[RMDB]
RNA sequence: GGGAACGACUCGAGUAGAGUCGAAAAAGCUGUAUCGUCCAGAGUUUCAGCAGUCCGAUGUACACGAUGGUCGGAGACCCCACAGACCCGAUCCACUGGGAGAGGACCAGAAGCCCGUCGAUGUGCUUUCUGGCCAGCGUGACGGCCACGGCGGCCGACUUGUUGUCUCAUUCGUGAGACAACAAGUAAAAGAAACAACAACAACAAC
Reactivity to 2A3 in 0.01 (KOAc 150mM, MgCl2 10mM, bicine 150mM(pH8.5), 24C), signal-to-noise 2, nucleotides 027 to 156: a000g020c030u060g010u050a080u070c040g090u090c090c040a080g050a070g080u100u100u040c000a000g000c010a010g070u020c020c030g050a070u050g010u130a020c060a000c030g050a130u080g010g020u030c000g040g010a020g120a100c000c010c070c010a040c000a070g160a100c020c050c030g020a070u100c020c070a080c120u120g010g040g010a160g000a110g050g000a140c010c000a030g070a080a030g010c030c110c040g100u090c050g120a180u200g070u040g000c000u070u090u030c010u000g010g000c010c000a030g000c030g060u100g050a060c010g000g000c000c010a070c080g200g060c050g010g010c000c000g000
Reactivity to DMS in 0.01 (KOAc 150mM, MgCl2 10mM, bicine 150mM(pH8.5), 24C), signal-to-noise 1, nucleotides 027 to 156: a090g010c030u000g010u010a040u000c060g010u000c010c080a270g000a260g010u000u000u000c040a120g010c020a150g030u010c040c010g040a110u010g010u030a080c000a050c050g020a110u000g000g030u020c030g060g000a110g020a130c030c000c010c050a060c080a070g010a100c020c010c000g020a110u000c000c070a130c080u010g040g040g000a150g030a300g040g010a070c010c010a110g000a130a110g040c030c000c010g030u000c050g050a170u000g000u000g000c060u010u000u000c030u010g020g020c000c030a000g020c030g000u010g010a150c070g010g000c010c000a030c200g030g000c090g010g030c000c010g000
An RNA of 207 nucleotides, treated with 2A3 and DMS and read out base by base.
DMS adducts were read by reverse transcription with MarathonRT.
For 2A3, 819 sequencing reads were counted.
It was measured as part of the RMDB library OK3TST.